[RMDB]
RNA sequence: GGGAACGACUCGAGUAGAGUCGAAAACUGCGGCAUGCAAGCCUGAUGAUGAGGAGGAGAAAGCAUUAGGUAGCUUUGACACAUAAUAAUGAUGUCUGUAGCAUCAUUUGUCUGCCUCCGCAUUCCACAUCUCGUGCGGAUUCGUCCGCACGAGAUGAAAAGAAACAACAACAACAAC
Reactivity to 2A3 in 0.01 (KOAc 150mM, MgCl2 10mM, bicine 150mM(pH8.5), 24C), signal-to-noise 2, nucleotides 027 to 126: c020u010g030c040g030g050c110a040u130g040c070a110a020g040c000c020u050g050a070u050g000a000u030g020a000g050g030a010g040g020a100g190a050a060a000g020c010a010u000u180a080g070g030u060a020g020c000u090u030u100g050a020c000a000c010a040u200a110a130u170a150a030u260g060a120u000g070u030c120u150g140u120a030g020c000a000u000c010a010u030u020u100g030u010c020u010g030c000c010u060c000c000g000c000a020u060u000c020c010a060
Reactivity to DMS in 0.01 (KOAc 150mM, MgCl2 10mM, bicine 150mM(pH8.5), 24C), signal-to-noise 2, nucleotides 027 to 126: c230u010g030c130g010g030c240a070u000g020c080a070a120g000c040c020u000g000a050u000g000a030u020g010a090g000g010a080g030g000a150g000a090a090a070g010c000a100u010u010a070g010g020u000a120g000c010u010u000u000g000a040c060a090c140a040u010a090a070u000a040a070u000g000a050u000g000u010c030u010g030u000a130g000c000a070u010c020a030u020u000u000g000u000c080u010g020c040c020u000c000c010g000c000a000u000u010c050c030a160